[RMDB]
RNA sequence: GGGAACGACUCGAGUAGAGUCGAAAAUGAGGGAGUCCCUGCAACUGAGCACUUUUUGGCACACACCACACUGCACCUCGCCCUUCCCCGGGACGUCAACGUUUCCCUCACGGGCACGCUUACGAGGCUGCGUAUAGUUAUUCGUAACUAUACGCAGAAAAGAAACAACAACAACAAC
Reactivity to 2A3 in 0.01 (KOAc 150mM, MgCl2 10mM, bicine 150mM(pH8.5), 24C), signal-to-noise 9, nucleotides 027 to 126: u190g010a060g010g040g020a030g050u050c000c000c000u020g030c030a110a090c050u100g030a030g060c030a040c070u090u080u050u120u160g070g000c020a020c000a000c000a010c050c010a030c000a010c030u040g000c020a050c020c000u020c020g030c000c000c000u030u050c010c010c010c010g020g000g020a030c010g030u060c030a080a050c050g020u010u060u030c000c000c010u020c010a040c020g010g010g000c030a010c040g040c010u070u060a060c080g040a050g080g000
Reactivity to DMS in 0.01 (KOAc 150mM, MgCl2 10mM, bicine 150mM(pH8.5), 24C), signal-to-noise 6, nucleotides 027 to 126: u020g000a070g020g000g010a120g000u000c010c020c010u010g010c100a070a090c110u010g000a120g020c040a050c050u010u010u000u020u010g010g000c030a060c050a030c050a070c040c040a050c050a070c020u020g000c060a080c040c030u000c060g000c060c010c010u010u010c020c000c000c070g000g000g000a060c060g010u010c100a050a070c070g010u010u000u010c010c000c000u000c030a100c110g000g000g000c110a050c070g010c060u020u000a090c100g000a080g020g010